[RMDB]
RNA sequence: GGGAACGACUCGAGUAGAGUCGAAAAUCUGUAACGGCUUGCAUCCUGAACAAUCAGGCUAUCAGCAUUAAUCUCAUUGCAAUAGACUAGUGAAGUCAAUUCAUAUAACUCUGUAUCAUCAGGAUAAUAUACCCUGAGAUUUCGAUCUCAGGGUAUAAAAAGAAACAACAACAACAAC
Reactivity to 2A3 in 0.01 (KOAc 150mM, MgCl2 10mM, bicine 150mM(pH8.5), 24C), signal-to-noise 1, nucleotides 027 to 126: u040c000u030g100u080a070a070c050g110g020c030u000u100g040c050a020u040c020c000u000g040a060a010c050a090a120u040c000a000g050g000c010u020a030u040c070a040g000c010a000u010u110a100a110u090c100u010c120a050u060u030g000c020a030a000u020a030g020a040c030u040a020g040u040g100a070a000g000u090c040a040a080u060u030c020a020u120a000u000a200a060c020u030c020u120g030u070a090u040c020a040u040c030a010g060g000a020u060a100a070
Reactivity to DMS in 0.01 (KOAc 150mM, MgCl2 10mM, bicine 150mM(pH8.5), 24C), signal-to-noise 3, nucleotides 027 to 126: u000c040u010g000u020a080a140c130g030g000c040u010u000g030c110a060u010c020c000u000g010a090a110c150a130a090u000c010a030g010g020c020u000a030u000c060a090g000c070a040u000u000a100a100u000c120u010c070a060u000u000g000c060a110a060u000a070g010a050c050u000a100g000u010g010a060a040g000u000c120a060a070u010u000c050a050u010a080u000a100a080c120u000c040u010g020u000a060u000c100a070u010c020a020g000g010a090u010a100a150